The record gives the reactivity of an RNA of 177 nucleotides to DMS. DMS (dimethyl sulfate) methylates the pairing face of unpaired adenines and cytosines. Conditions: 150 mM KOAc, 10 mM MgCl2 and 150 mM bicine (pH 8.5), 24 C.
RNA sequence: GGGAACGACUCGAGUAGAGUCGAAAACACUCGACAGGAUUAAGCAUCGCGAAGACAUCCAUGUAGAGGCAGGCCAGACCAGCCUUGAGGAUGUUUUCAUCCAGUUCAUGGCCGGGGCGAAGGACAAACGACCCUAAAAUUUCGAUUUUAGGGUCGUAAAAGAAACAACAACAACAAC
Reactivity to DMS in 0.01 (KOAc 150mM, MgCl2 10mM, bicine 150mM(pH8.5), 24C), signal-to-noise 2, nucleotides 027 to 126: c120a120c070u010c050g000a070c100a070g010g000a070u000u000a090a100g010c040a070u000c120g020c160g010a060a020g010a010c050a000u010c010c000a100u010g020u010a210g000a020g020g020c000a070g020g040c040c140a160g000a280c040c020a040g020c020c000u000u000g000a160g020g010a020u010g000u000u000u000u000c040a100u010c020c020a110g020u020u010c060a040u000g000g000c050c030g000g000g000g000c040g000a050a070g020g010a100c100a020a160